This 177-nucleotide RNA was probed chemically with 2A3 and DMS.
The data come from the RNA Mapping Database (RMDB), library OK2TRN.

[RMDB]
RNA sequence: GGGAACGACUCGAGUAGAGUCGAAAAUCUGUUCAGCUUCGUCGUCCCUGGCUGUUGGGGAGGACUUUGUCUGUCUGACUGCCGCUGGGCUGCCUUGCCCCAGCUCCCUGGGGUCCUUUGCUCCGUACUUCAAAACUGAUUUCGAUCAGUUUUGAAGAAAAGAAACAACAACAACAAC
Reactivity to 2A3 in 0.01 (KOAc 150mM, MgCl2 10mM, bicine 150mM(pH8.5), 24C), signal-to-noise 4, nucleotides 027 to 126: u020c010u030g070u070u060c010a000g010c010u040u040c030g040u010c000g140u000c010c000c000u030g160g010c100u130g120u300u210g020g010g010g020a050g010g010a020c000u050u060u060g080u020c020u020g060u010c010u020g020a070c040u060g040c010c040g010c040u010g000g000g000c030u060g100c010c030u040u090g010c010c010c000c000a000g000c020u030c010c020c000u020g010g000g010g010u030c030c030u110u090u080g020c000u010c010c010g050u030a060
Reactivity to DMS in 0.01 (KOAc 150mM, MgCl2 10mM, bicine 150mM(pH8.5), 24C), signal-to-noise 5, nucleotides 027 to 126: u000c020u010g010u000u000c040a040g010c040u000u010c110g000u000c020g000u000c000c010c000u000g010g030c100u010g010u000u010g010g010g000g010a080g010g010a030c020u010u000u000g000u010c020u010g000u010c040u000g010a070c070u000g010c090c080g000c050u000g010g000g010c050u000g020c090c070u000u000g000c080c010c010c020a070g010c060u000c050c050c010u000g000g000g010g000u010c080c050u000u000u000g000c040u000c020c020g010u010a120
Record summary:
The reactions ran in a buffer of 150 mM KOAc, 10 mM MgCl2 and 150 mM bicine (pH 8.5), at 24 C. 2A3 is a SHAPE reagent: it acylates the 2'-hydroxyl of flexible nucleotides of all four kinds. The 2A3 profile rests on 7,320 reads.